[RMDB]
RNA sequence: GGGAACGACUCGAGUAGAGUCGAAAAGAUAUGGACGAGAGCGACGAAGCAUCGUAACAUCCAUCGGAAACGAUGGUGGAUGCAGAGCUCGAGUCCUAAGUCAAAGCUGAUCCUUCGGGAUCAGCAACAACCGUGAUGUGUUCGCACAUCACGGUUGAAAAGAAACAACAACAACAAC
Reactivity to DMS in 0.01 (KOAc 150mM, MgCl2 10mM, bicine 150mM(pH8.5), 24C), signal-to-noise 3, nucleotides 027 to 126: g000a040u000a300u000g000g020a000c010g010a300g000a020g050c010g000a120c210g020a120a140g000c000a000u000c000g000u010a020a030c210a020u020c000c000a020u000c000g030g000a120a090a180c000g030a000u000g010g010u000g000g000a010u000g010c010a020g000a100g010c000u000c000g000a300g050u000c010c000u000a020a110g000u000c050a110a030a150g020c000u000g030a000u000c000c000u010u000c260g020g030g010a020u000c000a000g010c030a050a050
Reactivity to 2A3 in 0.01 (KOAc 150mM, MgCl2 10mM, bicine 150mM(pH8.5), 24C), signal-to-noise 1, nucleotides 027 to 126: g040a050u110a030u160g000g010a010c010g010a010g000a000g090c040g300a300c040g060a190a010g000c000a010u000c010g020u020a020a010c050a300u050c000c000a010u000c000g060g020a100a000a010c010g000a010u000g000g000u000g030g000a000u010g000c030a000g000a010g000c000u000c000g000a040g000u000c000c000u000a040a000g030u010c020a120a120a070g000c010u000g000a000u010c000c000u060u070c210g100g010g000a020u000c040a000g050c010a000a000

Overview:
This 177-nucleotide RNA was probed chemically with DMS and 2A3. 2A3 adducts were read by reverse transcription with SuperScript II with manganese. The reactions ran in a buffer of 150 mM KOAc, 10 mM MgCl2 and 150 mM bicine (pH 8.5), at 24 C. It was measured as part of the RMDB library TTRDEL. Values cover nucleotides 27 to 126. For DMS the reverse transcriptase was MarathonRT. The DMS profile rests on 1,651 reads.